[RMDB]
RNA sequence: GGGAACGACUCGAGUAGAGUCGAAAAAUAAAAGUAUCUCAUCAGGUAUAUUUAAAUUACACGGUAGUUAAGGAGGUAACGAUAAGUUGAGUAAUUUUAACAUCAUGGGAUCUUUAAUGCUUAUAGCGACAUACAGAAAGUUCGCUUUCUGUAUGUCAAAAGAAACAACAACAACAAC
Reactivity to DMS in 0.01 (KOAc 150mM, MgCl2 10mM, bicine 150mM(pH8.5), 24C), signal-to-noise 3, nucleotides 027 to 126: a070u020a040a040a030a070g000u000a010u000c000u000c000a030u000c150a090g020g010u010a040u010a100u020u000u010a010a020a030u000u010a000c010a130c040g000g000u000a050g010u000u000a060a120g000g010a060g010g010u000a030a010c020g000a100u010a070a080g010u010u000g010a090g010u010a010a020u000u000u000u000a030a090c110a040u010c110a050u000g010g000g000a010u000c010u000u000u000a090a050u010g020c060u010u010a110u010a080g020c210
Reactivity to 2A3 in 0.01 (KOAc 150mM, MgCl2 10mM, bicine 150mM(pH8.5), 24C), signal-to-noise 3, nucleotides 027 to 126: a000u100a010a010a000a010g010u010a040u000c010u000c010a030u020c050a040g040g040u050a090u000a040u110u150u060a020a000a000u000u000a020c050a010c010g050g030u070a050g030u050u040a080a070g100g070a050g140g050u040a020a010c000g010a120u040a230a090g050u100u070g030a030g030u020a000a050u060u030u010u030a010a030c020a020u050c010a010u020g010g030g000a000u010c010u010u080u060a150a090u120g010c050u130u090a130u050a200g030c020
Structure probing data (DMS and 2A3) for a 177-nucleotide construct.
DMS adducts were read by reverse transcription with MarathonRT.
It was measured as part of the RMDB library RFMREP.
The RNA was probed in 150 mM KOAc, 10 mM MgCl2 and 150 mM bicine (pH 8.5) at 24 C.